[RMDB]
RNA sequence: GGGAACGACUCGAGUAGAGUCGAAAAAAUACCACUCAUCUUUGGGGUCAUCUUUGGAGCGCCCCUAGGAACCGCCAGCUUACCUAGUCCCGGGUAGGGGCCGACUGGCGGCCGGGAUGCAGCUGAGAUAAGGUAGGGCAUUCGUGCCCUACCUUAUAAAAGAAACAACAACAACAAC
Reactivity to 2A3 in 0.01 (KOAc 150mM, MgCl2 10mM, bicine 150mM(pH8.5), 24C), signal-to-noise 1, nucleotides 027 to 126: a000a010u230a000c000c000a030c000u000c000a060u030c000u050u050u060g010g000g010g000u100c010a150u020c110u130u100u280g240g000a070g000c120g020c000c000c000c000u000a010g000g010a150a090c000c000g040c000c010a010g000c000u100u050a160c090c070u020a040g020u000c030c040c000g090g030g000u030a050g000g020g070g010c030c010g130a120c000u000g000g000c010g000g010c000c000g020g000g000a000u110g000c090a060g000c010u040g010a000g040
Reactivity to DMS in 0.01 (KOAc 150mM, MgCl2 10mM, bicine 150mM(pH8.5), 24C), signal-to-noise 1, nucleotides 027 to 126: a060a090u040a230c000c020a140c080u000c000a000u000c000u020u030u010g030g000g000g000u000c030a240u000c020u000u020u090g000g020a020g000c220g000c000c000c000c000u000a010g000g000a150a230c000c000g000c010c000a020g050c020u000u000a000c000c010u030a160g000u020c000c020c000g000g010g010u010a010g000g000g020g000c030c020g000a200c000u000g000g020c000g000g020c160c040g020g020g000a000u000g020c220a020g020c060u000g000a120g010